[RMDB]
The record gives the reactivity of an RNA of 207 nucleotides to DMS and 2A3. Conditions: 150 mM KOAc, 10 mM MgCl2 and 150 mM bicine (pH 8.5), 24 C. For 2A3, 4,982 sequencing reads were counted. DMS adducts were read by reverse transcription with MarathonRT.
RNA sequence: GGGAACGACUCGAGUAGAGUCGAAAAGGAGGACGAAGCAUAUUUCUGUUUCUGGAGGAUUAUUUAUAAUCUGACGGAAAGUCUUGCAGGUGGCUGGGAUAUGUUCAGUCUGGUAGAAUUAAGCACGAAAACGUGUCCUUGUUCGCAAGGACACGAAGUCAUCUAUAAAGUUCGCUUUAUAGAUGACAAAAGAAACAACAACAACAAC
Reactivity to DMS in 0.01 (KOAc 150mM, MgCl2 10mM, bicine 150mM(pH8.5), 24C), signal-to-noise 3, nucleotides 027 to 156: g030g020a210g010g010a050c040g010a110a170g020c030a040u000a050u010u000u000c040u000g020u000u000u000c020u000g000g020a300g000g010a030u000u000a030u000u000u000a090u000a080a040u000c030u010g000a300c040g020g000a020a050a060g010u000c020u000u010g020c030a100g030g030u010g010g020c040u000g010g000g010a050u000a020u000g010u010u010c040a250g010u000c020u010g000g030u000a050g020a080a110u000u010a030a090g000c040a070c050g000a060a040a090a150c010g040u010g010u000c000c000u010u000g020u000u000c300g010c030a000a000g000g000a000c010a010c020g000a010a040
Reactivity to 2A3 in 0.01 (KOAc 150mM, MgCl2 10mM, bicine 150mM(pH8.5), 24C), signal-to-noise 5, nucleotides 027 to 156: g050g010a030g020g010a010c020g020a040a000g030c010a020u030a060u080u080u050c050u110g120u050u040u000c010u000g010g010a010g000g000a000u000u020a040u030u270u030a160u050a050a010u030c020u020g020a000c010g020g020a040a020a000g020u020c040u090u130g040c040a030g030g110u050g060g000c040u040g020g000g010a020u030a010u060g090u130u040c050a010g020u000c020u010g010g050u070a030g070a090a050u140u120a080a040g020c050a040c120g080a020a060a050a030c000g010u000g000u000c000c000u000u010g010u020u060c100g000c120a000a000g000g010a010c000a000c000g000a000a000